[RMDB]
Chemical mapping of a 177-nucleotide RNA with 2A3 and DMS. For 2A3 the reverse transcriptase was SuperScript II with manganese. Conditions: 150 mM KOAc, 10 mM MgCl2 and 150 mM bicine (pH 8.5), 24 C. For 2A3, 5,906 sequencing reads were counted.
RNA sequence: GGGAACGACUCGAGUAGAGUCGAAAAGCGUUUUCCGUUCGUUUCUUUUUUGUUCCGUCCUUCCAUGAAUGGACUCUUUCCUCGGGGCCCCGUUGAGAAGAGUCUUAGGUCGCUCUCCGCACCUCUCGUGUAUGUUAUAGUUCGCUAUAACAUACACAAAAGAAACAACAACAACAAC
Reactivity to 2A3 in 0.01 (KOAc 150mM, MgCl2 10mM, bicine 150mM(pH8.5), 24C), signal-to-noise 3, nucleotides 027 to 126: g050c020g020u010u010u080u080c020c030g000u020u060c030g010u010u060u020c000u070u110u050u010u050u120g060u120u020c010c010g040u040c010c020u060u040c010c010a060u120g090a090a080u130g130g000a010c000u020c000u020u050u020c010c000u030c010g250g010g300g060c140c100c060c040g030u050u060g070a140g020a150a000g010a010g010u000c000u020u020a030g010g020u020c030g000c010u020c000u000c020c000g030c020a070c010c010u050c000u040c090
Reactivity to DMS in 0.01 (KOAc 150mM, MgCl2 10mM, bicine 150mM(pH8.5), 24C), signal-to-noise 5, nucleotides 027 to 126: g010c050g000u000u000u000u000c020c040g010u010u010c130g010u000u000u000c000u000u000u000u000u000u010g010u000u000c030c020g000u010c020c030u000u000c040c050a090u010g010a100a100u000g010g000a040c010u000c010u000u000u000c030c010u000c040g010g010g020g010c150c110c010c020g010u000u000g000a110g010a030a040g000a040g010u000c020u000u000a090g010g010u000c040g000c020u000c020u000c020c030g010c080a100c070c030u000c080u000c140